[RMDB]
The record gives the reactivity of an RNA of 207 nucleotides to 2A3.
2A3 adducts were read by reverse transcription with SuperScript II with manganese.
The reactions ran in a buffer of 150 mM KOAc, 10 mM MgCl2 and 150 mM bicine (pH 8.5), at 24 C.
RNA sequence: GGGAACGACUCGAGUAGAGUCGAAAAGAUUAAGUGGGAGCGUCGCCCUAUCGGUGCAUCGGAUAUUAAUUAGCCAGUGCGUGGCACUACGCAUAUUGAUGUCUACUUUGGCGUAGACUCUGCCAAUUUAAGGAUUGAUGGGCAAUCCAGCCCUAGAGACGUCACUCCCAUUCGUGGGAGUGACGUCAAAAGAAACAACAACAACAAC
Reactivity to 2A3 in 0.01 (KOAc 150mM, MgCl2 10mM, bicine 150mM(pH8.5), 24C), signal-to-noise 1, nucleotides 027 to 156: g070a000u210u300a240a000g110u040g000g020g000a000g010c040g040u030c010g080c000c000c000u120a210u300c020g000g030u000g070c000a030u100c000g070g040a100u090a010u060u160a170a040u050u180a030g090c130c000a080g000u100g000c010g000u000g170g000c040a080c160u040a020c000g080c000a000u090a110u100u190g000a010u000g090u050c080u000a080c000u030u100u100g010g000c010g000u000a000g060a020c000u040c040u040g040c020c000a020a060u050u050u230a070a070g030g010a040u000u000g090a000u200g000g020g000c070a000a030u040c000c000a000g000c020c020c020u020a010g070a000